Source: RMDB library RFM100, as collected in RNAgym. Chemical mapping of a 177-nucleotide RNA with DMS and 2A3.
RNA sequence: GGGAACGACUCGAGUAGAGUCGAAAAGAAAGAGCAGCACACAGCGACGAAGAUCCGGGCUGGAUUCUAGAGCACGGUCGCCCCAGCGCGGCCCGGGAAGUCAGUGGCAAGACCGCCUGAGCAGCAAUCUUCUCACGCUAUUCGUAGCGUGAGAAGAAAAAGAAACAACAACAACAAC
Reactivity to DMS in 0.01 (KOAc 150mM, MgCl2 10mM, bicine 150mM(pH8.5), 24C), signal-to-noise 1, nucleotides 027 to 126: g000a060a170a120g000a140g000c030a050g000c080a120c070a090c060a010g020c060g020a120c080g000a140a090g000a040u040c000c000g000g000g010c030u020g060g000a120u020u010c040u010a090g000a110g000c010a030c010g000g000u000c080g000c060c000c010c010a070g030c080g080c050g000g040c050c010c010g000g000g000a050a020g050u040c000a150g050u000g000g000c110a100a120g020a100c030c040g000c040c020u000g000a060g030c160a100g050c120a080a140
Reactivity to 2A3 in 0.01 (KOAc 150mM, MgCl2 10mM, bicine 150mM(pH8.5), 24C), signal-to-noise 2, nucleotides 027 to 126: g040a020a050a000g040a000g040c030a000g000c010a020c000a000c010a060g080c050g090a030c050g100a070a020g040a020u030c000c000g040g040g010c020u040g060g040a140u040u020c030u100a030g050a020g040c020a010c100g060g000u040c050g010c010c020c000c000a110g020c100g020c050g050g000c000c000c020g000g000g060a000a000g000u010c030a000g020u070g070g010c000a070a000g060a060c000c000g060c040c040u080g020a070g020c000a000g000c020a060a100
The RNA was probed in 150 mM KOAc, 10 mM MgCl2 and 150 mM bicine (pH 8.5) at 24 C. The DMS profile rests on 1,463 reads. 2A3 adducts were read by reverse transcription with SuperScript II with manganese.